[RMDB]
RNA sequence: GGGAACGACUCGAGUAGAGUCGAAAAUCCACCUUGGGGUGCCCUAUUCGGAGCACUGCAGUUCCCGAUAGAAAGGCUAAGCACCUCGCAAUGAGGUAAGGUGGGACUUUUCCUUCGGGAACCAAGCGUCGAUAUAAAUCUUCGGAUUUAUAUCGACAAAAGAAACAACAACAACAAC
Reactivity to DMS in 0.01 (KOAc 150mM, MgCl2 10mM, bicine 150mM(pH8.5), 24C), signal-to-noise 1, nucleotides 027 to 126: u020c000c040a070c230c090u010u040g000g020g050g010u000g000c000c030c000u000a160u010u020c230g000g010a090g030c020a010c020u000g000c090a300g010u000u030c010c000c000g000a000u020a040g010a010a000a000g000g020c030u010a070a180g030c050a130c000c000u000c000g030c110a160a060u030g000a070g010g010u000a090a050g010g030u000g020g050g000a080c010u000u010u000u000c000c050u010u000c000g010g010g030a020a020c030c100a070a270g010c220
Reactivity to 2A3 in 0.01 (KOAc 150mM, MgCl2 10mM, bicine 150mM(pH8.5), 24C), signal-to-noise 2, nucleotides 027 to 126: u020c020c000a050c060c040u080u090g140g000g000g020u010g000c040c020c020u100a300u070u260c130g030g030a130g000c000a000c060u050g040c010a010g010u010u000c000c000c000g010a000u000a040g050a010a050a000g090g020c050u090a020a060g090c010a040c040c000u030c000g010c100a230a300u300g030a020g000g060u080a050a060g090g010u000g010g000g080a100c010u020u040u000u010c000c000u000u040c010g020g010g010a010a010c010c000a070a020g040c090
This 177-nucleotide RNA was probed chemically with DMS and 2A3. Reactivities are rounded to 0.1 and cut off at 0 and 3. The DMS profile rests on 695 reads. Reactivities are given for positions 27 through 126. The reactions ran in a buffer of 150 mM KOAc, 10 mM MgCl2 and 150 mM bicine (pH 8.5), at 24 C. High 2A3 reactivity points to a flexible backbone, as in loops and unpaired stretches.